Description
The record gives the reactivity of an RNA of 207 nucleotides to 2A3. The reactions ran in a buffer of 150 mM KOAc, 10 mM MgCl2 and 150 mM bicine (pH 8.5), at 24 C.

RNA sequence: GGGAACGACUCGAGUAGAGUCGAAAACAGAAAGGAAAGAGAAGGCAGAAUGGACUGCUGGGAAGGCAACCAAAAAAUGUCCGCUACAGAUAUAUCAUGUACAUCAUUGCACUCUAUCUUCACUUGAUGCUUGUGAGGUAGGAUCACUGACCCCAUAGUAUCGUCGUACCUUCGGGUACGACGAUACAAAAGAAACAACAACAACAAC
Reactivity to 2A3 in 0.01 (KOAc 150mM, MgCl2 10mM, bicine 150mM(pH8.5), 24C), signal-to-noise 1, nucleotides 027 to 156: c000a020g080a060a040a010g080g010a040a160a040g060a030g000a060a010g000g020c030a010g080a080a090u070g010g080a040c050u010g000c030u030g050g040g040a040a040g040g000c040a090a080c030c070a160a110a000a020a000a000u070g030u010c010c030g040c010u020a000c000a020g100a050u030a030u050a000u180c070a060u100g020u000a040c010a040u040c000a020u010u100g030c060a020c040u050c050u040a030u090c030u070u050c050a020c020u040u060g010a040u110g130c100u120u050g000u010g020a020g020g000u010a040g020g040a020u080c030a010c070u050g020a070c000c000c020c000a000u040a140